[RMDB]
RNA sequence: GGGAACGACUCGAGUAGAGUCGAAAAGUCGGGAUUGUUUAUGGUGGUCGUUGAAGUCAUAACCAUAAGAUGAACGUUAGACUAUGGAAAAUCUAUGAAAGUUUAUCAUAGUUAUUGUGCGACCGAGCUAUAAUUAUAAAUUCGUUUAUAAUUAUAGAAAAGAAACAACAACAACAAC
Reactivity to DMS in 0.01 (KOAc 150mM, MgCl2 10mM, bicine 150mM(pH8.5), 24C), signal-to-noise 3, nucleotides 027 to 126: g000u010c010g010g040g000a210u010u010g010u000u000u000a070u010g000g010u000g000g000u020c010g020u020u000g000a120a170g000u000c020a040u020a050a060c030c050a100u020a100a080g000a040u000g010a060a030c040g000u000u010a060g010a040c020u010a070u010g000g010a050a050a060a070u020c050u020a090u040g020a090a120a140g020u010u020u020a010u010c010a020u000a010g000u010u000a030u030u010g000u000g010c000g000a050c020c010g010a060g000
Reactivity to 2A3 in 0.01 (KOAc 150mM, MgCl2 10mM, bicine 150mM(pH8.5), 24C), signal-to-noise 3, nucleotides 027 to 126: g060u050c020g020g000g090a220u000u120g090u050u060u060a030u040g020g100u030g020g010u000c010g030u040u090g040a100a000g040u020c020a080u020a130a060c030c010a020u020a100a050g050a030u080g050a060a000c030g020u030u040a020g010a060c010u010a000u030g000g060a030a030a010a120u030c020u040a160u140g100a240a200a110g030u020u080u070a080u020c000a000u010a000g000u000u020a050u080u140g020u030g000c000g000a000c010c010g000a010g000
Background
Structure probing data (DMS and 2A3) for a 177-nucleotide construct. The 2A3 profile rests on 1,212 reads. DMS adducts were read by reverse transcription with MarathonRT. The RNA was probed in 150 mM KOAc, 10 mM MgCl2 and 150 mM bicine (pH 8.5) at 24 C.